[RMDB]
RNA sequence: GGGAACGACUCGAGUAGAGUCGAAAAGAACGUCCGCACUAAGCUUGCCAUCAAUAUGGGUGCCAUGGAGGAGUCCAAGGCAUUCAGGUUGGCUAAGGAGGGAUGAACCGGGCCAGGGGUGAAAACCAGCAGCCAAGAGUUCCCGUGGUAGGCAGUACAUAAUAUAGCACUUCGGUGCUAUAUUAUGAAAAGAAACAACAACAACAAC
Reactivity to 2A3 in 0.01 (KOAc 150mM, MgCl2 10mM, bicine 150mM(pH8.5), 24C), signal-to-noise 3, nucleotides 027 to 156: g040a070a040c030g060u030c020c010g060c050a040c060u090a080a030g040c000u040u030g010c010c010a080u080c060a140a160u150a110u190g010g000g000u010g000c000c000a020u030g010g020a040g040g070a060g110u000c010c010a030a040g010g000c010a000u000u000c000a010g000g030u020u010g020g030c020u020a020a040g040g020a030g010g030g000a020u060g030a040a020c040c030g010g040g000c010c030a080g010g020g030g000u060g040a040a050a040a080c010c000a000g030c010a000g000c030c010a050a020g080a000g070u010u020c000c000c010g010u040g030g020u040a040g030g000c030a010g040u060a030
Reactivity to DMS in 0.01 (KOAc 150mM, MgCl2 10mM, bicine 150mM(pH8.5), 24C), signal-to-noise 3, nucleotides 027 to 156: g020a100a170c030g020u000c020c030g020c050a190c060u010a120a090g010c010u010u000g000c030c020a140u000c060a060a160u000a110u000g000g020g010u010g000c000c020a150u000g000g010a040g050g010a230g010u000c010c000a030a100g020g040c000a020u000u000c010a020g000g030u010u010g000g020c030u000a070a080g000g010a170g000g020g000a080u000g010a050a160c030c010g010g020g010c030c030a130g000g030g020g010u010g000a080a040a110a060c020c010a070g000c070a090g000c030c020a040a090g000a150g000u000u000c010c000c010g040u010g000g030u000a070g020g010c030a110g030u000a180